[RMDB]
This 177-nucleotide RNA was probed chemically with DMS and 2A3.
The reactions ran in a buffer of 150 mM KOAc, 10 mM MgCl2 and 150 mM bicine (pH 8.5), at 24 C.
Reactivities are given for positions 27 through 126.
For 2A3 the reverse transcriptase was SuperScript II with manganese.
For DMS the reverse transcriptase was MarathonRT.
RNA sequence: GGGAACGACUCGAGUAGAGUCGAAAACUCAUCCAGUGGAUGCAUUGAGUGAAUUGAUUGUCAGGGCUGUCUCUAGGUUUAAUCCCAGACCUCUCUGUGCUUAGGGCAAACACUCAUUUGGCCUUAAGCGCUUAUUCAGUUUCGACUGAAUAAGCGCAAAAGAAACAACAACAACAAC
Reactivity to DMS in 0.01 (KOAc 150mM, MgCl2 10mM, bicine 150mM(pH8.5), 24C), signal-to-noise 2, nucleotides 027 to 126: c020u000c030a100u020c090c030a050g020u050g000g010a060u000g040c050a020u010u000g000a020g160u000g010a060a070u010u050g020a090u030u020g010u000c070a050g000g000g030c070u020g010u030c030u000c000u050a060g000g000u000u000u000a030a060u050c000c000c090a110g000a110c080c010u010c000u040c010u000g000u030g000c000u000u000a000g000g030g000c000a070a060a100c100a060c090u000c090a100u000u020u000g020g030c080c010u000u060a010a040
Reactivity to 2A3 in 0.01 (KOAc 150mM, MgCl2 10mM, bicine 150mM(pH8.5), 24C), signal-to-noise 3, nucleotides 027 to 126: c020u010c000a020u010c010c020a060g090u060g150g020a050u050g030c060a050u010u110g060a070g040u050g060a150a110u110u070g050a070u120u060g040u090c040a030g050g000g000c030u030g020u080c020u000c030u150a060g030g070u020u090u110a090a060u100c000c000c000a000g010a030c000c010u020c000u000c010u050g070u040g050c010u010u070a040g090g000g000c030a020a020a030c060a010c040u040c040a070u040u030u060g040g070c000c000u010u010a040a050